[RMDB]
Background: Chemical mapping of a 177-nucleotide RNA with 2A3 and DMS. 2A3 is a SHAPE reagent: it acylates the 2'-hydroxyl of flexible nucleotides of all four kinds. Values cover nucleotides 27 to 126.
RNA sequence: GGGAACGACUCGAGUAGAGUCGAAAAUUUUUGCCACUUUAACGACCAGGACGAUGUCGUCAGCGUACAAGAGUGUGUCAACUCCAUUCGGCAGUAUGUGAAAGAUAGGCUGCAUCGCCACCAGGAAACCUCGUAAUAAUUUCGAUUAUUACGAGGUAAAAGAAACAACAACAACAAC
Reactivity to 2A3 in 0.01 (KOAc 150mM, MgCl2 10mM, bicine 150mM(pH8.5), 24C), signal-to-noise 7, nucleotides 027 to 126: u050u040u040u060u080g070c020c010a070c050u090u120u090a100a040c060g060a070c010c030a040g060g030a040c020g060a060u080g040u070c010g010u010c020a010g040c020g030u030a020c020a080a050g020a010g050u050g010u040g060u060c020a020a040c040u000c040c010a050u050u040c020g050g000c040a040g020u050a030u070g080u040g090a150a040a030g100a040u080a060g040g000c010u010g000c020a010u030c020g020c030c010a050c020c010a020g070g000a040a120
Reactivity to DMS in 0.01 (KOAc 150mM, MgCl2 10mM, bicine 150mM(pH8.5), 24C), signal-to-noise 9, nucleotides 027 to 126: u000u010u000u000u010g010c020c010a120c110u010u000u000a090a090c110g000a120c040c060a130g010g010a060c060g010a090u010g020u000c190g010u000c040a110g020c050g010u000a040c080a100a110g000a030g010u000g010u010g020u000c050a070a080c070u000c020c020a060u000u010c040g000g010c110a080g010u000a030u000g010u000g010a090a090a110g000a120u010a080g010g010c020u000g010c020a040u000c040g010c020c010a100c050c050a090g010g000a120a110